[RMDB]
RNA sequence: GGGAACGACUCGAGUAGAGUCGAAAAGGAAGCUUCGGCUUCCGACCAGGGGGUCUUUAAGGGCGAGGCUUUUGACGCUCUGAAGCCUCCACGGAGCGAUAAGCUACCCACCGCUUCUUAAAGACGGAGGCACCCGCCGGACGGCCUUCGGGCCGAACGGGCGUACUUACUUCGGUAAGUACGCCCGAAAAGAAACAACAACAACAAC
Reactivity to 2A3 in 0.01 (KOAc 150mM, MgCl2 10mM, bicine 150mM(pH8.5), 24C), signal-to-noise 2, nucleotides 027 to 156: g010g000a010a010g030c020u050u120c290g110g000c000u010u010c040c000g000a000c000c000a010g050g000g030g000g000u020c010u000u030u000a010a000g020g010g000c000g070a070g100g000c070u000u070u200u190g160a110c110g000c000u000c000u010g000a050a010g000c000c000u020c000c000a010c020g000g000a000g000c020g060a090u030a260a000g010c020u110a130c030c130c030a070c000c020g000c010u220u260c000u000u300a010a020a000g000a010c020g010g000a010g000g000c000a050c040c020c030g100c030c030g120g070a070c000g080g000c000c030u090u060c250g070g000g010c000c000g000a040a030